[RMDB]
RNA sequence: GGGAACGACUCGAGUAGAGUCGAAAAGUAUAUGGAAGCAUAUAAUCUUGUCUCUGCAUCAGGUUUCCGCCUUUGGUGUUAUAAGACCUUUGAUAUUUAUAAUCUCUGGUCUACUUUUACAAAAGUUCAAUCUACUUCUUCGGAAGUAGAAAAAGAAACAACAACAACAAC
Reactivity to 2A3 in 0.01 (KOAc 150mM, MgCl2 10mM, bicine 150mM(pH8.5), 24C), signal-to-noise 4, nucleotides 027 to 129: g040u020a010u010a000u070g040g040a070a010g120c030a000u000a020u010a040a080u050c040u010u050g000u040c000u000c000u050g040c010a040u020c000a020g080g000u050u100u010c050c030g010c020c010u090u040u120g040g000u050g010u050u040a160u010a140a010g000a020c000c000u000u000u000g010a020u000a070u100u210u140a140u120a110a050u020c000u000c000u000g000g000u000c000u000a030c010u000u080u060u040a060c070a020a120a000a010g030u050u070c000a000a030
Reactivity to DMS in 0.01 (KOAc 150mM, MgCl2 10mM, bicine 150mM(pH8.5), 24C), signal-to-noise 2, nucleotides 027 to 129: g050u030a040u050a070u050g040g010a150a070g050c000a050u010a060u020a090a120u030c020u000u060g010u000c040u040c040u000g040c060a130u080c110a140g000g080u000u000u010c050c040g010c100c030u000u000u000g000g000u020g030u000u060a120u050a140a000g040a050c010c000u000u070u000g010a020u040a140u000u130u030a060u000a210a040u030c010u050c010u030g000g010u000c010u010a080c050u020u000u010u020a000c180a000a000a000a000g030u020u010c150a020a010

An RNA of 170 nucleotides, treated with 2A3 and DMS and read out base by base. For DMS, 8,360 sequencing reads were counted. The reactions ran in a buffer of 150 mM KOAc, 10 mM MgCl2 and 150 mM bicine (pH 8.5), at 24 C. Source: RMDB library 15KLIB, as collected in RNAgym. For 2A3, 5,341 sequencing reads were counted.